The data come from the RNA Mapping Database (RMDB), library RFMREP. This 177-nucleotide RNA was probed chemically with DMS and 2A3. The reactions ran in a buffer of 150 mM KOAc, 10 mM MgCl2 and 150 mM bicine (pH 8.5), at 24 C. DMS adducts were read by reverse transcription with MarathonRT. For 2A3, 4,835 sequencing reads were counted.
RNA sequence: GGGAACGACUCGAGUAGAGUCGAAAAAUAGUGUUCAGAACAAAGGACAUGUGUGUUCCCUGUGUGUGGAUGGUGUUCAGCAGCAGGGACAGAUGUGUUUACCAAAACAACACCUUCGGGUGUUGAACGAAUACUUAGACUUCGGUCUAAGUAUUCGAAAAGAAACAACAACAACAAC
Reactivity to DMS in 0.01 (KOAc 150mM, MgCl2 10mM, bicine 150mM(pH8.5), 24C), signal-to-noise 3, nucleotides 027 to 126: a070u000a060g010u010g000u000u000c270a090g040a300a070c070a020a060a050g000g000a000c010a010u000g000u010g010u000g000u000u000c010c000c000u010g020u000g020u020g050u000g030g020a030u010g020g000u010g020u000u000c030a110g000c010a100g000c010a030g010g020g010a030c020a000g000a020u000g010u000g000u000u000u000a300c040c030a060a020a050a240c000a010a010c000a000c000c010u000u010c180g050g000g020u000g020u000u000g000a040a100
Reactivity to 2A3 in 0.01 (KOAc 150mM, MgCl2 10mM, bicine 150mM(pH8.5), 24C), signal-to-noise 4, nucleotides 027 to 126: a000u130a040g070u040g060u080u100c080a040g060a290a050c040a120a090a040g030g010a000c010a000u020g010u000g010u000g040u180u170c000c000c000u030g020u010g000u010g040u030g040g100a130u050g080g280u200g140u220u090c020a050g010c010a010g000c000a000g010g000g010a000c000a000g110a000u010g020u000g020u010u030u080a080c030c030a000a060a040a090c000a000a000c000a010c000c020u010u050c180g060g000g010u000g000u000u000g000a030a010